[RMDB]
RNA sequence: GGGAACGACUCGAGUAGAGUCGAAAAAGAAGAACGCAUUGCUGAUGAAAGAGCAGAAACAGGAUAUGACAUUGUUGAUAAAAAGGAAUUCUCUUCAUUCUUAGCAAGUGCUAUAGAGGGCCUUGAACCCGUAUCAUUGGUUCGCCAAUGAUACGGGAAAAGAAACAACAACAACAAC
Reactivity to DMS in 0.01 (KOAc 150mM, MgCl2 10mM, bicine 150mM(pH8.5), 24C), signal-to-noise 1, nucleotides 027 to 126: a090g000a140a030g000a100a120c180g010c020a060u000u000g000c010u010g010a050u000g020a060a040a050g010a010g010c250a100g000a080a030a040c060a060g000g000a240u010a070u010g000a100c100a060u000u010g050u000u000g020a090u010a010a070a050a080a030g000g000a040a120u000u000c010u000c030u020u020c050a050u040u000c110u020u010a030g010c030a020a010g040u010g010c020u000a070u010a100g020a110g000g000g000c070c040u000u000g010a040a190
Reactivity to 2A3 in 0.01 (KOAc 150mM, MgCl2 10mM, bicine 150mM(pH8.5), 24C), signal-to-noise 1, nucleotides 027 to 126: a030g110a040a020g040a010a010c030g040c030a020u010u020g000c000u050g000a050u020g010a060a030a090g010a010g000c010a020g190a000a020a000c000a040g040g030a070u080a040u170g090a090c080a110u080u130g020u040u030g040a090u190a100a180a010a000a000g160g000a090a110u110u040c020u000c000u020u010c040a020u140u030c010u090u040a000g000c010a100a090g080u020g050c000u000a000u020a020g120a100g070g000g020c000c000u010u060g070a060a050